[RMDB]
RNA sequence: GGGAACGACUCGAGUAGAGUCGAAAAAACAGGUCGCAAUAGGGCAGCGCCGCCGCCAUCGAACCGGCACGCGGCUGGAACUCCGGAUGUGCCGCGCGAGGGUUCAGCCAGACCAGCAACUCGGCGCGCAAUCAUGUUAGUUCGCUAACAUGAUUGCAAAAGAAACAACAACAACAAC
Reactivity to 2A3 in 0.01 (KOAc 150mM, MgCl2 10mM, bicine 150mM(pH8.5), 24C), signal-to-noise 5, nucleotides 027 to 126: a000a010c080a030g000g040u060c020g020c080a090a120u090a240g040g030g000c040a030g020c030g000c030c000g010c010c010g020c010c010a090u090c080g050a060a050c030c000g040g000c040a010c040g040c010g040g010c010u070g090g040a070a020c030u010c050c010g030g020a070u140g040u100g070c000c040g030c020g000c000g000a100g030g040g020u040u050c000a010g010c010c010a020g030a060c010c020a020g040c020a010a110c020u030c030g050g000c010g000c010
Reactivity to DMS in 0.01 (KOAc 150mM, MgCl2 10mM, bicine 150mM(pH8.5), 24C), signal-to-noise 4, nucleotides 027 to 126: a060a070c120a100g000g020u000c040g000c150a110a080u010a090g010g010g010c050a090g000c040g050c040c020g030c060c050g020c030c060a080u050c110g030a070a060c080c030g010g000c060a070c020g040c030g000g040c010u010g000g010a120a090c060u000c020c000g020g000a070u020g030u000g000c010c050g000c070g020c060g010a160g000g000g010u010u010c050a110g000c030c050a070g010a120c050c040a110g020c100a050a040c050u010c010g000g020c030g020c060